Overview
This 177-nucleotide RNA was probed chemically with 2A3 and DMS. For DMS the reverse transcriptase was MarathonRT.
RNA sequence: GGGAACGACUCGAGUAGAGUCGAAAAAGAGUAUCAACGAGUGGAUUGCUAAUUCAGAGGAGGAUCUAUUGAUUGACCCUCUGGUGUCACACACACCCCCAGAAACCUCCCUUCCGUUUUUAACCCCUCGUAUAGCGGGGUUCGCCCCGCUAUACGAAAAAGAAACAACAACAACAAC
Reactivity to 2A3 in 0.01 (KOAc 150mM, MgCl2 10mM, bicine 150mM(pH8.5), 24C), signal-to-noise 3, nucleotides 027 to 126: a000g140a040g030u190a070u170c060a060a060c040g010a030g070u080g010g060a070u050u100g020c050u110a130a110u190u080c020a040g010a010g090g010a040g030g000a040u000c000u060a140u170u300g090a050u050u100g060a130c000c000c040u010c000u000g000g010u010g030u060c040a030c000a000c000a000c000a030c060c000c000c000c000a010g070a020a050a030c000c020u010c020c000c000u050u000c010c010g000u010u010u010u090u010a100a130c000c000c000c010
Reactivity to DMS in 0.01 (KOAc 150mM, MgCl2 10mM, bicine 150mM(pH8.5), 24C), signal-to-noise 2, nucleotides 027 to 126: a000g000a050g020u000a110u000c100a050a060c120g010a060g000u030g000g020a090u000u000g080c040u000a120a070u080u060c030a000g000a030g000g000a110g070g000a040u000c000u000a270u010u100g000a040u010u010g000a080c060c020c000u000c010u000g000g010u010g050u010c100a050c100a140c070a010c130a140c000c000c000c000c010a070g010a020a120a100c070c000u000c040c020c040u010u000c060c010g030u000u010u000u000u000a050a150c070c010c010c060